[RMDB]
RNA sequence: GGGAACGACUCGAGUAGAGUCGAAAAGCUGCCUUUCGAGGCAGCAAAAAAACCUUUGUGCAAUGACCACGGUAGAACUACCAGUCAUUUGCCCAUUGGGCAAGGGACUGGCUACUAUCAAUUGCACUCUGGUAAAAAACAGACUUUCGAGUCUGAAUGAUAUUCAAGAGUUCGCUCUUGAAUAUCAAAAAGAAACAACAACAACAAC
Reactivity to DMS in 0.01 (KOAc 150mM, MgCl2 10mM, bicine 150mM(pH8.5), 24C), signal-to-noise 2, nucleotides 027 to 156: g000c010u010g020c010c010u010u000u000c220g000a110g020g030c010a010g020c000a000a000a020a110a040a080a020c000c000u000u000u010g000u000g010c000a020a010u020g000a190c050c050a140c120g030g010u000a020g000a100a100c080u000a080c000c010a030g010u000c000a080u000u000u000g000c000c000c010a300u020u030g060g020g010c020a010a050g010g030g010a060c010u010g010g030c000u000a060c000u000a060u000c020a090a210u000u000g010c020a010c000u000c060u000g020g020u000a000a050a050a090a060a070c020a020g010a010c000u000u000u010c170g020a110g040u000c000u000g000a080a120
Reactivity to 2A3 in 0.01 (KOAc 150mM, MgCl2 10mM, bicine 150mM(pH8.5), 24C), signal-to-noise 4, nucleotides 027 to 156: g000c000u000g000c000c000u110u070u130c190g030a020g000g000c010a000g000c000a050a000a070a000a010a030a000c000c000u010u000u010g000u000g000c000a000a010u020g030a090c050c090a090c300g000g000u010a000g020a120a050c090u130a060c270c000a000g000u000c000a020u000u000u000g000c000c000c030a300u160u300g000g000g000c000a010a000g020g010g010a000c000u000g000g010c000u000a000c010u020a020u070c030a120a230u000u000g010c000a010c000u000c000u000g000g010u080a150a100a010a000a020a000c020a020g030a040c020u140u170u190c220g050a030g010u010c000u000g000a040a050